Record summary: An RNA of 177 nucleotides, treated with DMS and 2A3 and read out base by base. It was measured as part of the RMDB library TTRDES. The RNA was probed in 150 mM KOAc, 10 mM MgCl2 and 150 mM bicine (pH 8.5) at 24 C. For DMS the reverse transcriptase was MarathonRT.

RNA sequence: GGGAACGACUCGAGUAGAGUCGAAAAGAUAUGGAAUGUUCUGGGAGCUCUCACAUCGGAAACGAUGUAGAGCGAGGAUCAGACAUUCCUAAGUCAAAAGUACAGCGGGGUUCGCCCCGCUGUACAAUCAUCUAAAAUAGUUCGCUAUUUUAGAUGAAAAAGAAACAACAACAACAAC
Reactivity to DMS in 0.01 (KOAc 150mM, MgCl2 10mM, bicine 150mM(pH8.5), 24C), signal-to-noise 3, nucleotides 027 to 126: g000a000u000a050u000g010g000a010a000u000g000u010u010c010u000g000g010g000a030g020c000u000c000u000c300a010c010a010u000c010g020g000a020a010a030c000g010a000u000g010u000a010g000a010g030c000g010a050g020g010a100u000c010a000g010a040c000a010u000u000c000c010u000a000a080g000u000c010a090a110a150a190g010u000a000c000a010g010c000g020g000g010g010u000u010c300g010c000c000c000c010g030c010u010g010u000a010c010a060a100
Reactivity to 2A3 in 0.01 (KOAc 150mM, MgCl2 10mM, bicine 150mM(pH8.5), 24C), signal-to-noise 2, nucleotides 027 to 126: g000a010u010a000u080g000g020a010a010u010g030u290u270c020u030g060g000g070a110g020c000u010c000u000c030a020c000a010u000c000g000g020a000a010a010c000g020a000u010g000u010a000g000a010g010c000g000a020g030g000a030u030c020a000g000a000c000a010u000u020c000c000u000a020a000g000u000c020a060a050a090a150g020u000a010c020a000g030c030g060g050g040g030u060u160c130g130c000c000c000c000g000c020u000g000u000a000c000a000a000